[RMDB]
RNA sequence: GGGAACGACUCGAGUAGAGUCGAAAAUUCAAAGCCAAUUUCCUAUCAACCAUGGAGCCUUUUUGAAGGAUGUGAAAUUAAGAGGCUUCCUACCUUGUUAUUUAAAGCUGCUACAUCCCAGAAGACCCAAGUAACCAUACUUCGGUAUGGUUACUUGAAAAGAAACAACAACAACAAC
Reactivity to 2A3 in 0.01 (KOAc 150mM, MgCl2 10mM, bicine 150mM(pH8.5), 24C), signal-to-noise 1, nucleotides 027 to 126: u050u030c060a050a010a040g060c020c030a000a080u030u040u020c000c000u070a090u120c040a020a060c040c010a050u090g020g000a010g000c000c000u000u040u050u060u150g150a070a020g070g060a070u050g040u040g110a110a110a120u090u050a120a060g010a000g000g000c000u080u020c020c000u010a040c010c030u030u050g080u080u050a160u120u190u090a100a210a020g020c020u030g000c000u010a020c010a060u030c000c030c000a040g030a180a020g010a060c010c060
Reactivity to DMS in 0.01 (KOAc 150mM, MgCl2 10mM, bicine 150mM(pH8.5), 24C), signal-to-noise 4, nucleotides 027 to 126: u010u010c080a060a100a110g010c050c040a080a100u000u000u000c010c010u010a110u010c120a060a090c100c070a080u010g000g010a070g010c010c000u000u000u000u010u050g040a110a100g000g010a060u000g020u020g000a050a080a110u000u000a060a060g010a050g010g010c000u000u010c030c060u000a150c080c060u010u000g000u000u000a060u010u010u000a060a100a080g010c040u000g000c070u000a030c080a060u000c010c020c030a110g010a100a090g000a110c170c090